[RMDB]
RNA sequence: GGGAACGACUCGAGUAGAGUCGAAAAGGAUCCUAAGUAGUCAGGGUAACUGCCUCCAGAUCAGUUACCAGUGAUGACUACACAAUGUGUCAUCGAUCUGGAGGAUGACGUAUUGAGAAGAGGAUCGCUACUCGAAUGUAUUCGUACAUUCGAGUAGAAAAGAAACAACAACAACAAC
Reactivity to 2A3 in 0.01 (KOAc 150mM, MgCl2 10mM, bicine 150mM(pH8.5), 24C), signal-to-noise 8, nucleotides 027 to 126: g030g000a010u000c000c010u040a150a040g000u010a000g000u010c040a020g080g040g010u010a020a010c000u010g030c010c040u070c070c040a060g020a290u090c000a010g020u010u020a020c000c020a000g060u040g090a130u050g000a000c010u030a000c020a000c000a010a030u030g010u000g010u010c000a000u000c010g120a100u050c100u220g170g090a090g130g010a030u010g000a000c010g020u010a020u000u120g050a140g030a130a020g060a030g020g000a000u000c000g020
Reactivity to DMS in 0.01 (KOAc 150mM, MgCl2 10mM, bicine 150mM(pH8.5), 24C), signal-to-noise 9, nucleotides 027 to 126: g000g000a000u000c000c000u010a090a130g020u000a010g010u000c000a050g000g010g010u000a010a020c020u000g000c140c040u000c090c110a090g000a100u000c000a020g010u000u000a020c020c010a140g020u010g020a120u000g010a020c000u000a010c010a270c030a010a020u000g010u000g000u000c000a000u000c000g010a100u000c100u010g010g000a090g010g010a010u000g010a010c000g000u000a010u000u000g000a170g010a140a130g010a040g020g000a010u000c000g000
Source: RMDB library OK2TRN, as collected in RNAgym. Structure probing data (2A3 and DMS) for a 177-nucleotide construct. For 2A3, 23,569 sequencing reads were counted. Reactivities are given for positions 27 through 126. For DMS, 26,740 sequencing reads were counted. DMS adducts were read by reverse transcription with MarathonRT.